[RMDB]
This 170-nucleotide RNA was probed chemically with DMS and 2A3. DMS adducts were read by reverse transcription with MarathonRT. For 2A3 the reverse transcriptase was SuperScript II with manganese. Values cover nucleotides 27 to 129. In probing experiments dimethyl sulfate is read out at A N1 and C N3, which are open when not base-paired.
RNA sequence: GGGAACGACUCGAGUAGAGUCGAAAAGGAUCUCCGCCGGGUGGGUUCACAUCCCCAACCCGCGGGCCGGCUGUUCUUCUUUUCCUUUGCUCGUCUUCCCCGGUCAGCCUCCCGAGUUCCUCUUCUUGUCCGAUUCCGUUCGCGGAAUCGAAAAGAAACAACAACAACAAC
Reactivity to DMS in 0.01 (KOAc 150mM, MgCl2 10mM, bicine 150mM(pH8.5), 24C), signal-to-noise 7, nucleotides 027 to 129: g030g020a020u020c050u000c030c020g040c030c010g000g000g000u030g020g030g040u040u020c200a120c140a200u030c100c020c010c070a040a050c020c010c030g030c040g000g030g080c060c010g010g010c060u020g020u030u020c010u020u020c010u000u010u010u080c020c040u010u010u030g010c000u050c030g000u020c010u080u000c040c020c010c080g050g010u030c050a090g020c040c020u000c030c010c020g000a160g000u030u030c040c010u050c080u030u030c030u010u000g030u000c100
Reactivity to 2A3 in 0.01 (KOAc 150mM, MgCl2 10mM, bicine 150mM(pH8.5), 24C), signal-to-noise 9, nucleotides 027 to 129: g020g000a010u040c030u010c050c020g040c050c030g050g020g030u020g010g010g030u100u130c080a070c020a290u150c000c010c000c000a050a120c000c010c000g030c030g020g090g040c010c010g020g000c040u040g020u060u010c030u050u020c000u030u020u010u020c000c000u030u030u040g010c010u010c010g020u000c010u010u010c010c000c000c000g010g020u080c030a030g020c000c010u000c000c000c000g020a010g050u030u020c000c000u030c000u050u020c000u030u050g080u050c050
The reactions ran in a buffer of 150 mM KOAc, 10 mM MgCl2 and 150 mM bicine (pH 8.5), at 24 C. Source: RMDB library 15KLIB, as collected in RNAgym.